Conditions: 150 mM KOAc, 10 mM MgCl2 and 150 mM bicine (pH 8.5), 24 C. Chemical mapping of a 177-nucleotide RNA with 2A3 and DMS. For DMS the reverse transcriptase was MarathonRT. The 2A3 profile rests on 3,573 reads. The DMS profile rests on 1,662 reads.
[RMDB]
RNA sequence: GGGAACGACUCGAGUAGAGUCGAAAAGAUAUGGAUACGUCCGACAGCAACAGCUAACGGCGUCGGAAACGACGUUUAGACAUGCUGGGGACGUAUCCUAAGUCAAAACUCGCGCUUCGGCGCGAGACUCUGAAGGUGAGUUCGCUCACCUUCAGAGAAAAGAAACAACAACAACAAC
Reactivity to 2A3 in 0.01 (KOAc 150mM, MgCl2 10mM, bicine 150mM(pH8.5), 24C), signal-to-noise 2, nucleotides 027 to 126: g030a010u120a020u190g000g000a010u020a000c000g020u000c030c040g160a290c050a030g080c030a020a160c040a170g120c030u090a100a040c200g140g030c010g000u000c000g040g000a070a140a010c010g010a010c010g000u020u110u120a060g000a080c070a070u090g000c000u000g000g050g010g000a000c000g000u010a000u010c000c000u000a000a010g020u010c020a040a000a000a200c010u010c000g010c000g000c010u100u100c300g140g000c030g000c000g020a000g000a000
Reactivity to DMS in 0.01 (KOAc 150mM, MgCl2 10mM, bicine 150mM(pH8.5), 24C), signal-to-noise 2, nucleotides 027 to 126: g010a070u010a300u010g020g010a010u000a000c000g000u000c000c000g040a210c020a010g020c030a040a100c300a180g000c010u010a050a080c300g010g010c000g030u000c010g000g020a070a070a250c010g000a010c000g030u000u010u000a020g010a060c100a210u000g010c000u000g020g000g000g010a000c000g020u010a000u000c000c000u020a040a060g000u020c020a100a090a060a130c000u000c000g000c000g020c000u000u000c230g000g000c020g030c000g000a000g020a040